[RMDB]
RNA sequence: GGGAACGACUCGAGUAGAGUCGAAAAACACGAGUCAGCUCAGACUUGUGCGAGUACCGAUUCUGCAAUCGGUGCAGACUCUAGUCUACGCUGACUGGAGUAGUAAGUGAUUGCAGAAUCACUUGCAUACUAUACUGGCGUUCGCGCCAGUAUAGUAAAAAGAAACAACAACAACAAC
Reactivity to 2A3 in 0.01 (KOAc 150mM, MgCl2 10mM, bicine 150mM(pH8.5), 24C), signal-to-noise 2, nucleotides 027 to 126: a000c000a010c010g030a010g010u000c010a030g030c120u080c110a040g010a040c000u010u020g020u020g000c020g010a020g020u030a050c020c080g000a000u010u010c010u050g030c050a000a020u010c000g230g000u050g000c010a040g130a070c000u000c010u000a000g000u000c010u080a100c230g050c240u080g000a000c000u010g000g000a000g000u050a010g020u030a050a170g160u000g110a010u000u020g040c030a010g040a020a010u000c000a000c020u010u060g020c010a050
Reactivity to DMS in 0.01 (KOAc 150mM, MgCl2 10mM, bicine 150mM(pH8.5), 24C), signal-to-noise 4, nucleotides 027 to 126: a060c060a070c020g000a010g010u000c010a080g010c170u010c260a140g000a020c020u000u000g000u010g010c010g000a210g010u000a100c080c050g020a010u000u000c080u000g000c080a020a020u000c010g030g010u000g000c040a110g000a120c000u000c020u000a010g000u000c000u000a150c300g020c150u010g000a020c010u000g010g020a040g010u000a050g000u010a050a060g010u010g010a010u000u000g000c140a050g000a020a020u010c000a040c050u000u010g000c080a220